[RMDB]
This 177-nucleotide RNA was probed chemically with DMS and 2A3. For DMS the reverse transcriptase was MarathonRT. The RNA was probed in 150 mM KOAc, 10 mM MgCl2 and 150 mM bicine (pH 8.5) at 24 C. The data come from the RNA Mapping Database (RMDB), library TTRDEL. For 2A3, 14,601 sequencing reads were counted.

RNA sequence: GGGAACGACUCGAGUAGAGUCGAAAAGAUAUGGAGCUUCACGAGCUAUGAAGGAUAACACAUCGGAAACGAUGUGGAAGCUGGAGCUCGGAAGCUCCUAAGUCAAACUAUCACUUCGGUGAUAGAAUCUAGUAAAGUAGUUCGCUACUUUACUAGAAAAAGAAACAACAACAACAAC
Reactivity to DMS in 0.01 (KOAc 150mM, MgCl2 10mM, bicine 150mM(pH8.5), 24C), signal-to-noise 7, nucleotides 027 to 126: g000a030u000a300u000g000g000a010g010c000u000u000c010a150c010g020a010g010c000u000a240u010g010a140a170g000g000a040u010a140a270c000a000c010a000u000c000g010g000a090a080a180c000g000a010u000g010u000g000g000a070a150g000c020u000g010g000a010g010c000u000c010g000g000a010a010g000c000u000c000c000u000a000a060g000u010c030a120a150a230c000u000a000u000c000a010c000u000u010c200g020g010u000g000a000u000a000g000a100a100
Reactivity to 2A3 in 0.01 (KOAc 150mM, MgCl2 10mM, bicine 150mM(pH8.5), 24C), signal-to-noise 7, nucleotides 027 to 126: g020a000u070a050u140g010g000a010g000c010u080u040c150a210c300g000a000g000c010u080a300u300g030a030a010g020g010a010u060a160a050c000a010c000a010u000c000g000g030a060a050a030c020g000a000u010g000u010g000g010a030a030g010c010u020g000g040a010g000c000u000c000g000g000a000a000g000c000u000c000c000u000a000a000g000u000c010a010a030a050c000u000a010u000c000a010c020u060u080c300g150g000u000g000a000u000a000g000a010a120